[RMDB]
Structure probing data (2A3) for a 207-nucleotide construct. Source: RMDB library M2RFPK, as collected in RNAgym. As a SHAPE reagent, 2A3 marks flexible, mostly unpaired nucleotides at the ribose 2'-OH.
RNA sequence: GGGAACGACUCGAGUAGAGUCGAAAACGUAAAGGGCGAGCUUUUGUCCGGAAUGGUUCCGCCGUGAUCGGGCCAUGCAAUAGUUGACAACGACAACUAUGCUCCGGUUGCUCAGGCAGCGUAACGCACAAUGGAACAACCUUCGGGUUGUUCCAAACACUCUGGUUGGGUUCGCCCAACCAGAGUGAAAAGAAACAACAACAACAAC
Reactivity to 2A3 in 0.01 (KOAc 150mM, MgCl2 10mM, bicine 150mM(pH8.5), 24C), signal-to-noise 1, nucleotides 027 to 156: c020g050u120a060a110a150g070g000g030c050g000a050g040c030u040u130u160u290g080u110c000c060g000g020a060a010u080g020g010u300u200c020c070g020c070c230g120u110g000a040u020c000g000g000g000c000c000a060u090g000c010a140a140u000a000g010u000u050g010a130c020a080a000c190g160a010c050a000a000c060u000a000u010g010c010u000c000c000g000g000u060u070g000c010u020c020a020g150g000c020a020g030c020g110u080a090a000c000g080c030a060c020a080a210u020g000g000a000a000c000a010a010c000c000u050u050c040g030g000g000u000u000g000u000u000c000c000a000a000a000